[RMDB]
RNA sequence: GGGAACGACUCGAGUAGAGUCGAAAAGAGGUUGUGGGUCUGCUCUGGUUCCAAGGCGUCCAAGAGGAAGGUUGUCAUCCAGAGCACUGGACUUGAGGAUUGCAUUGUGGAAGGCGCGGCGACGUAUGACGGUGAGUGAAGCUUAUCCUUCGCGGAACUGGCCACUAUAAUUCGUUAUAGUGGCCAGAAAAGAAACAACAACAACAAC
Reactivity to 2A3 in 0.01 (KOAc 150mM, MgCl2 10mM, bicine 150mM(pH8.5), 24C), signal-to-noise 2, nucleotides 027 to 156: g010a010g060g030u080u030g000u190g130g030g060u020c010u040g040c000u000c020u010g070g000u060u060c050c000a030a070g080g000c000g020u000c010c010a030a010g050a050g050g040a030a010g030g090u070u100g020u160c010a040u110c050c030a020g010a020g060c040a030c020u000g000g040a000c000u020u010g030a000g030g020a020u130u300g020c070a060u060u080g040u150g080g010a070a030g000g020c040g000c040g030g010c010g050a020c040g000u030a050u100g040a030c070g010g030u050g000a080g000u070g030a040a000g020c030u080u110a040u110c030c000u060u080c130g000c060g060g050a030a050